[RMDB]
RNA sequence: GGGAACGACUCGAGUAGAGUCGAAAAAGGGCCUUCACAGCCUGGACCGUCCAGGGGUCAGCAACCUGCAGCAGAUGUGGAUGCUUUGAAGGAUCCAGCCAGGAAGCUGCCUGCUGCAAAGGCAAAGUAAGUCAGGCAUAUUCGUAUGCCUGACUUAAAAAGAAACAACAACAACAAC
Reactivity to DMS in 0.01 (KOAc 150mM, MgCl2 10mM, bicine 150mM(pH8.5), 24C), signal-to-noise 2, nucleotides 027 to 126: a060g010g010g010c010c020u000u000c110a090c080a220g000c000c020u000g010g000a150c120c090g000u000c040c020a060g010g000g020g020u010c050a090g020c050a050a150c100c040u000g000c050a120g010c030a100g010a130u010g000u000g000g010a030u010g020c020u000u000u000g020a160a080g000g000a030u020c000c070a030g030c080c000a070g020g010a090a300g000c000u000g010c040c050u000g000c040u010g010c090a050a050a060g020g000c060a110a110a150g000
Reactivity to 2A3 in 0.01 (KOAc 150mM, MgCl2 10mM, bicine 150mM(pH8.5), 24C), signal-to-noise 1, nucleotides 027 to 126: a000g070g000g000c020c000u090u120c080a010c030a000g060c010c000u000g010g010a010c050c090g100u060c040c020a010g020g020g010g020u140c010a000g010c000a050a050c010c050u100g000c050a050g000c010a040g000a230u170g110u120g250g000a040u070g080c070u150u100u220g130a190a030g040g000a010u000c090c000a000g000c000c000a010g030g050a080a000g000c010u020g020c000c010u040g040c000u010g000c000a000a070a000g050g020c000a120a000a000g090